[RMDB]
The data come from the RNA Mapping Database (RMDB), library OK1LIB. Chemical mapping of a 177-nucleotide RNA with 2A3.
RNA sequence: GGGAACGACUCGAGUAGAGUCGAAAACGCUCAACACUGGUGCAUGUCCGUCGUCUCAAGAGCAAAACGGAUCUGCCAGACACGCAUGGCGCCUCGGCCGCCGCGUGUGGCCGCUUUGAUGUCCACGCCCUGGACGUACGUUCGCGUACGUCCAGGGAAAAGAAACAACAACAACAAC
Reactivity to 2A3 in 0.01 (KOAc 150mM, MgCl2 10mM, bicine 150mM(pH8.5), 24C), signal-to-noise 2, nucleotides 027 to 126: c040g040c020u040c020a000a030c030a020c140u070g020g030u030g010c100a110u150g030u000c010c000g000u010c030g050u000c040u010c130a170a070g090a020g020c000a000a100a000a000c010g050g000a010u020c020u070g010c020c000a010g050a050c000a000c030g050c070a120u110g050g000c030g040c010c000u070c060g080g000c060c020g000c000c020g110c060g000u110g010u020g030g000c010c000g000c090u090u070u080g100a120u060g030u000c030c030a060c050g070
The reactions ran in a buffer of 150 mM KOAc, 10 mM MgCl2 and 150 mM bicine (pH 8.5), at 24 C.